[RMDB]
RNA sequence: GGGAACGACUCGAGUAGAGUCGAAAAGGUCCUCGCUUCGGCGAGGACCAGAGCACCACUCCUGCGGGAGAUAAGGCCAAACGGACAGCCGGGUGCAAAGCCAAUUGUUUAAGUUCGCUUAAACAAACAUGAAGUAGAGAUUCGUCUCUACUUCAUGAAAAGAAACAACAACAACAAC
Reactivity to 2A3 in 0.01 (KOAc 150mM, MgCl2 10mM, bicine 150mM(pH8.5), 24C), signal-to-noise 3, nucleotides 027 to 126: g000g000u000c000c000u010c010g010c020u050u100c220g100g000c000g000a000g000g020a000c000c000a000g000a000g000c010a000c000c010a020c010u000c000c000u040g030c260g090g020g000a010g000a040u160a140a080g010g000c010c000a070a160a030c080g030g020a020c010a020g020c000c000g020g000g000u000g000c010a030a010a000g010c010c010a040a080u050u040g020u000u010u000a020a020g010u020u090c260g000c120u010u010a020a000a000c010a000a050a020
Reactivity to DMS in 0.01 (KOAc 150mM, MgCl2 10mM, bicine 150mM(pH8.5), 24C), signal-to-noise 7, nucleotides 027 to 126: g010g020u000c000c000u000c010g020c000u000u010c180g030g010c000g020a000g010g000a000c000c000a010g000a090g010c020a010c010c010a300c010u000c000c000u000g040c200g040g000g000a020g010a110u010a080a130g010g010c010c020a040a090a100c220g010g000a040c080a210g000c000c010g000g000g010u000g010c010a080a050a140g000c010c020a040a130u000u000g010u000u000u000a010a020g000u000u020c230g020c010u000u000a000a010a010c010a020a050a210
The record gives the reactivity of an RNA of 177 nucleotides to 2A3 and DMS. The 2A3 profile rests on 12,414 reads. The data come from the RNA Mapping Database (RMDB), library M2PK50. The DMS profile rests on 11,484 reads. The RNA was probed in 150 mM KOAc, 10 mM MgCl2 and 150 mM bicine (pH 8.5) at 24 C.